Chemical mapping of a 207-nucleotide RNA with 2A3 and DMS. The 2A3 profile rests on 3,284 reads.

[RMDB]
RNA sequence: GGGAACGACUCGAGUAGAGUCGAAAACAUCUAACACGACUAGACCAAAGGGCUCAAAGAACUGCUCAGGCUUCUUGCGCAGGGUAUUAAUGAUUCCCACGAUGACGUCGUACUCUUUGCUCGUCAUGUCCUUUUUCUUGCACGCUGCAUUAUUGUACUAUCCGGAAGGAUUCGUCCUUCCGGAUAGAAAAGAAACAACAACAACAAC
Reactivity to 2A3 in 0.01 (KOAc 150mM, MgCl2 10mM, bicine 150mM(pH8.5), 24C), signal-to-noise 5, nucleotides 027 to 156: c030a040u040c030u110a110a020c030a020c090g160a090c020u070a050g060a060c040c040a030a080a070g010g020g000c010u040c080a080a090a030g060a120a070c050u060g000c010u010c050a030g030g050c060u060u040c020u140u150g020c020g000c040a040g050g030g000u070a050u090u090a110a090u120g080a050u050u050c020c000c000a010c030g060a030u050g030a010c040g010u070c030g010u080a030c030u010c010u100u050u140g040c020u030c020g000u010c050a040u090g070u090c000c000u050u100u030u060u110c040u030u090g030c060a030c110g050c060u100g000c040a050u060u160a060u270u280g040u040a050
Reactivity to DMS in 0.01 (KOAc 150mM, MgCl2 10mM, bicine 150mM(pH8.5), 24C), signal-to-noise 2, nucleotides 027 to 156: c050a090u020c060u000a070a110c040a050c070g000a020c000u000a100g020a120c020c050a090a180a090g010g020g040c000u000c030a070a120a160g010a090a090c070u000g000c030u020c030a140g020g020c050u000u000c020u000u010g020c040g030c050a140g020g000g020u000a030u000u000a080a070u010g000a190u000u000c010c000c010a140c060g000a040u000g020a050c030g000u000c030g040u000a130c080u010c050u010u020u000g000c000u000c070g010u000c030a100u010g010u010c020c040u000u000u000u000u000c020u040u000g000c020a120c040g050c030u000g000c010a100u000u000a120u000u010g000u000a180
Source information: The data come from the RNA Mapping Database (RMDB), library OK3TST.